This 177-nucleotide RNA was probed chemically with DMS and 2A3. Reactivities are rounded to 0.1 and cut off at 0 and 3. The data come from the RNA Mapping Database (RMDB), libraries RFM100 and RFMREP. The RNA was probed in 150 mM KOAc, 10 mM MgCl2 and 150 mM bicine (pH 8.5) at 24 C.
[RMDB]
RNA sequence: GGGAACGACUCGAGUAGAGUCGAAAAUUCCAAUCCCAACUUUUGUCCAGUUGGGCGGCGGAAGAACGUUCUCUUUGAGGGCAUUGAAACGGUAUGGAUGCGGGAUAGCAAAGCAGCUUGAAGAAACUAAUUUGUAUAGAUUCGUCUAUACAAAUUAAAAAGAAACAACAACAACAAC
Reactivity to DMS in 0.01 (KOAc 150mM, MgCl2 10mM, bicine 150mM(pH8.5), 24C), signal-to-noise 9, nucleotides 027 to 126: u010u010c010c020a100a300u010c000c000c000a010a020c020u000u010u010u030g000u020c170c240a050g000u010u000g010g000g010c160g010g010c300g000g000a030a040g000a120a180c070g010u000u010c030u000c010u010u010u010g000a080g010g000g000c040a050u020u010g000a080a080a090c090g000g010u000a060u010g010g000a070u000g010c040g000g000g010a090u010a060g000c040a040a070a080g000c050a050g010c050u000u010g000a080a080g010a110a070a070c150
Reactivity to 2A3 in 0.01 (KOAc 150mM, MgCl2 10mM, bicine 150mM(pH8.5), 24C), signal-to-noise 9, nucleotides 027 to 126: u040u010c010c000a000a050u020c000c000c000a010a010c010u070u070u110u150g110u070c050c020a020g000u020u010g010g000g000c010g110g000c020g020g010a020a020g020a040a010c020g020u040u010c010u000c000u050u050u100g100a080g010g020g000c040a020u020u110g060a070a060a040c050g020g020u080a060u100g030g030a020u050g020c000g000g030g020a070u090a030g040c040a040a090a040g040c030a010g020c010u040u100g050a080a050g050a050a070a010c020